About this RNA
This 177-nucleotide RNA was probed chemically with DMS and 2A3. It was measured as part of the RMDB library RFM100. The reactions ran in a buffer of 150 mM KOAc, 10 mM MgCl2 and 150 mM bicine (pH 8.5), at 24 C. Values cover nucleotides 27 to 126. The 2A3 profile rests on 2,059 reads. The DMS profile rests on 5,678 reads. DMS adducts were read by reverse transcription with MarathonRT.
RNA sequence: GGGAACGACUCGAGUAGAGUCGAAAAACGUAUGGACUACGGUCCAUACGAUGGAGUGGGGGGGCAGGAGGGGCUCAGGGAGAAAGUGCAUACAGCCCCUGGCCCUCUCUGCCCUUCCGUCCCCUAAUUGUACUUGUUUGUUCGCAAACAAGUACAAAAAAGAAACAACAACAACAAC
Reactivity to DMS in 0.01 (KOAc 150mM, MgCl2 10mM, bicine 150mM(pH8.5), 24C), signal-to-noise 2, nucleotides 027 to 126: a080c010g010u000a020u000g000g010a020c000u000a060c240g040g030u000c000c000a000u010a000c000g000a030u020g030g000a130g050u040g020g000g010g000g030g010g020c010a000g000g010a000g000g000g010g000c000u030c000a000g010g000g020a090g000a080a040a120g000u020g020c210a080u010a040c140a120g000c130c000c000c000u000g000g000c040c000c000u000c000u010c000u000g000c000c000c000u020u000c000c000g020u010c000c000c020c050u000a060a190
Reactivity to 2A3 in 0.01 (KOAc 150mM, MgCl2 10mM, bicine 150mM(pH8.5), 24C), signal-to-noise 3, nucleotides 027 to 126: a000c010g000u010a000u000g010g000a000c010u030a020c300g040g000u000c000c000a000u000a000c000g010a010u010g050g020a100g070u220g010g000g000g000g000g000g010c030a000g010g040a020g010g030g000g000c080u080c180a010g010g070g050a080g100a050a070a050g130u120g070c040a050u160a270c050a090g050c000c000c000c000u000g000g010c010c030c000u010c000u000c000u000g000c000c010c000u000u000c000c000g000u020c000c000c000c000u070a110a130